Chemical mapping of a 177-nucleotide RNA with DMS and 2A3. The RNA was probed in 150 mM KOAc, 10 mM MgCl2 and 150 mM bicine (pH 8.5) at 24 C. DMS adducts were read by reverse transcription with MarathonRT.

RNA sequence: GGGAACGACUCGAGUAGAGUCGAAAAUUGGCCCAAGACAAUGGGAAGGUGGGCUUAGAAGCAGCCACCCUUUAACGAGUUCGUAACAGAUCACCCAUCGAGGUCAGAGGCACCUAAAAUGGACGGGAUUGGGGAUUAGAUUCGUCUAAUCCCCAAUAAAAGAAACAACAACAACAAC
Reactivity to DMS in 0.01 (KOAc 150mM, MgCl2 10mM, bicine 150mM(pH8.5), 24C), signal-to-noise 7, nucleotides 027 to 126: u020u020g010g040c010c010c040a110a100g010a070c300a140a050u010g000g010g010a060a040g020g020u000g010g010g000c020u000u010a100g000a110a140g040c210a100g000c010c020a060c030c000c010u000u000u010a080a080c280g010a080g010u010u000c030g000u010a100a090c130a120g000a070u010c030a110c010c010c010a040u010c050g000a080g010g020u000c010a080g000a120g010g020c060a070c030c030u010a050a040a060a080u020g010g000a090c080g000g000g000
Reactivity to 2A3 in 0.01 (KOAc 150mM, MgCl2 10mM, bicine 150mM(pH8.5), 24C), signal-to-noise 5, nucleotides 027 to 126: u040u070g080g020c010c000c000a010a010g070a030c030a030a040u040g020g040g010a040a010g030g030u070g040g080g000c010u030u050a060g040a080a000g030c030a010g000c000c000a030c030c000c010u020u080u060a030a010c020g020a030g030u040u040c010g010u020a020a010c010a030g020a020u030c010a010c030c010c000a010u050c060g060a060g020g090u010c010a050g040a130g110g020c030a060c020c000u080a080a060a060a070u140g040g020a040c060g020g000g050